Structure probing data (DMS and 2A3) for a 177-nucleotide construct. The 2A3 profile rests on 3,817 reads. DMS adducts were read by reverse transcription with MarathonRT. The RNA was probed in 150 mM KOAc, 10 mM MgCl2 and 150 mM bicine (pH 8.5) at 24 C.
RNA sequence: GGGAACGACUCGAGUAGAGUCGAAAAGAUAUGGACCGAGCGUGUGUACUGGAAGUAGGUCGGAAACGACCUAUGCAGGUAGACACGCGUUUGACGUCCUAAGUCGUUACAGUGAUUCGUCACUGAAUCGGUCAAUCUGAUUCGUCAGAUUGACCGAAAAAGAAACAACAACAACAAC
Reactivity to DMS in 0.01 (KOAc 150mM, MgCl2 10mM, bicine 150mM(pH8.5), 24C), signal-to-noise 3, nucleotides 027 to 126: g000a070u010a300u010g010g030a010c000c000g020a050g020c010g030u000g030u000g000u010a020c010u020g000g020a190a280g010u010a000g000g000u000c000g030g000a070a060a160c000g000a000c000c000u000a000u000g000c300a150g000g010u000a020g000a030c000a010c000g000c000g000u000u010u000g000a110c300g000u000c000c010u000a050a090g000u000c020g020u010u000a180c030a000g010u000g000a020u000u000c170g000u000c020a030c030u000g000a040a090
Reactivity to 2A3 in 0.01 (KOAc 150mM, MgCl2 10mM, bicine 150mM(pH8.5), 24C), signal-to-noise 2, nucleotides 027 to 126: g020a030u090a020u170g020g000a000c020c020g050a010g030c010g000u000g000u080g110u020a030c010u050g000g060a090a050g020u010a000g020g000u040c010g000g070a100a070a010c000g000a000c000c000u000a010u120g000c040a010g050g000u030a030g030a070c020a020c000g000c000g000u010u040u030g030a010c000g010u000c030c000u010a160a030g060u050c060g050u040u130a100c030a020g000u000g010a050u030u230c240g060u020c190a000c010u020g120a080a160